Chemical mapping of a 207-nucleotide RNA with 2A3 and DMS.
It was measured as part of the RMDB library OK3TST.
The RNA was probed in 150 mM KOAc, 10 mM MgCl2 and 150 mM bicine (pH 8.5) at 24 C.
RNA sequence: GGGAACGACUCGAGUAGAGUCGAAAAUAUGUGUAACCCGGCGGCCAAGCCCGUCAUGAUCUAUCUGGCCGGGCCGUACCGCCCGUACAUCAUCGGUUCGGGCUGCACCGUUCCGACGACGGUCAACAUCCUGAAAGCCGAAGAGACGGCCGUGUCGAUUUCCGUAGAAAUUCGUUUCUACGGAAAUAAAAGAAACAACAACAACAAC
Reactivity to 2A3 in 0.01 (KOAc 150mM, MgCl2 10mM, bicine 150mM(pH8.5), 24C), signal-to-noise 3, nucleotides 027 to 156: u210a070u110g110u000g020u040a040a070c010c010c000g000g000c020g000g000c020c070a040a020g000c000c010c010g010u010c040a070u160g040a040u080c160u200a090u040c000u060g030g040c110c030g070g000g000c000c000g060u050a050c000c010g020c010c000c010g010u020a050c020a150u130c010a050u030c040g010g010u040u040c020g000g000g000c060u020g000c070a020c030c040g020u100u050c050c010g060a080c120g000a000c000g030g000u010c000a050a030c020a050u010c000c000u080g100a130a070a050g070c010c010g010a070a010g030a010g040a010c040g020g000c050c060g090u060g060u070c020g010
Reactivity to DMS in 0.01 (KOAc 150mM, MgCl2 10mM, bicine 150mM(pH8.5), 24C), signal-to-noise 2, nucleotides 027 to 156: u010a060u010g010u000g020u000a070a080c020c020c010g030g040c000g010g030c020c100a130a120g000c000c000c020g000u020c020a070u010g020a080u000c140u010a120u000c050u000g030g010c020c070g060g020g020c020c090g020u000a050c020c020g020c060c030c030g000u000a080c050a100u010c030a140u000c030g030g000u000u000c030g030g000g040c020u030g000c080a100c000c030g000u010u000c040c160g060a150c060g010a020c000g020g010u000c020a040a050c010a050u000c020c000u000g010a080a120a140g010c010c020g000a100a170g000a170g000a150c040g030g020c020c030g040u000g010u000c030g000